[RMDB]
RNA sequence: GGGAACGACUCGAGUAGAGUCGAAAAUGGAAUAUCAUUUAAAUCCAUAGUUGUUAUUCUAAACAUCUCUCCUGCACCUUCACAGUCACUACCUGUUAUGAUUGGAGAAUGUGCAUAUACAAAGUUUACCGAUUACCAGGUUCGCCUGGUAAUCGGUAAAAGAAACAACAACAACAAC
Reactivity to 2A3 in 0.01 (KOAc 150mM, MgCl2 10mM, bicine 150mM(pH8.5), 24C), signal-to-noise 1, nucleotides 027 to 126: u070g000g000a020a050u300a100u280c140a000u140u140u280a080a060a150u000c000c000a000u000a000g090u050u000g140u050u000a000u050u300c170u260a110a000a040c210a120u070c000u000c000u000c030c000u000g000c000a000c000c050u000u000c000a000c000a050g000u000c070a070c260u290a120c000c080u130g000u300u100a100u000g100a140u000u170g000g020a120g000a100a000u000g000u030g000c050a070u220a070u120a160c220a000a090a000g000u000u000u000
Annotation: The record gives the reactivity of an RNA of 177 nucleotides to 2A3. Values cover nucleotides 27 to 126. 2A3 adducts were read by reverse transcription with SuperScript II with manganese.